[RMDB]
RNA sequence: GGGAACGACUCGAGUAGAGUCGAAAACAGGCUCAGCGUGAGGCGUGAGUGCCCCGUCCUCUCUUAAUGCAUUACCCACCCUACACCACAGCCUUUUCUGGCUGUCCUGGAGUCCCUCAGGCCCCCAAAGGGCUUUAGUAUUCGUACUAAAGCCCUUAAAAGAAACAACAACAACAAC
Reactivity to DMS in 0.01 (KOAc 150mM, MgCl2 10mM, bicine 150mM(pH8.5), 24C), signal-to-noise 3, nucleotides 027 to 126: c110a110g010g020c040u010c040a130g020c050g010u000g010a120g000g010c030g010u010g010a110g020u000g010c020c010c040c050g020u000c030c020u010c030u010c040u000u000a060a080u000g010c050a060u010u000a110c020c010c010a150c050c020c020u000a080c090a080c090c120a060c030a040g000c000c000u010u010u000u010c210u000g010g010c010u000g000u000c030c010u000g000g010a130g000u000c020c000c020u000c020a060g000g000c010c010c000c020c060a090